Description: The data come from the RNA Mapping Database (RMDB), library RFM100. This 177-nucleotide RNA was probed chemically with DMS and 2A3.

RNA sequence: GGGAACGACUCGAGUAGAGUCGAAAAGUCAUGGAGCGGGGGACCCACUUGUUGCAACGCUCGUUGCUAGGGGUGAAUCCGAAAGGACGGGCAUCUCUCCAAGCCCGAACCCGACAGCUAACCUCGCGAGAGCAUUCUUCUUCGGAAGAAUGCUCUCAAAAGAAACAACAACAACAAC
Reactivity to DMS in 0.01 (KOAc 150mM, MgCl2 10mM, bicine 150mM(pH8.5), 24C), signal-to-noise 4, nucleotides 027 to 126: g020u020c150a070u020g000g000a090g010c010g020g000g000g010g000a080c090c070c010a190c120u030u010g000u030u020g000c010a010a020c010g010c190u020c290g000u000u000g000c000u000a080g000g010g020g010u000g010a080a140u000c000c010g000a070a100a130g030g000a050c000g000g020g020c000a070u010c110u040c100u020c070c110a170a090g020c000c000c010g020a050a010c010c000c000g000a300c090a070g010c040u000a110a180c000c000u000c000g010c100
Reactivity to 2A3 in 0.01 (KOAc 150mM, MgCl2 10mM, bicine 150mM(pH8.5), 24C), signal-to-noise 2, nucleotides 027 to 126: g070u050c050a090u120g110g030a100g010c020g000g000g000g000g010a020c010c060c010a070c050u120u250g190u260u130g060c010a000a010c020g120c300u220c300g020u000u000g000c010u030a090g010g000g000g020u020g010a030a010u010c000c000g010a040a030a030g000g020a000c020g000g000g010c020a130u020c040u000c020u000c160c040a070a040g000c010c000c000g010a020a010c010c000c000g000a010c010a020g000c010u010a030a040c010c000u000c000g010c020

2A3 adducts were read by reverse transcription with SuperScript II with manganese. For DMS, 5,428 sequencing reads were counted. The RNA was probed in 150 mM KOAc, 10 mM MgCl2 and 150 mM bicine (pH 8.5) at 24 C.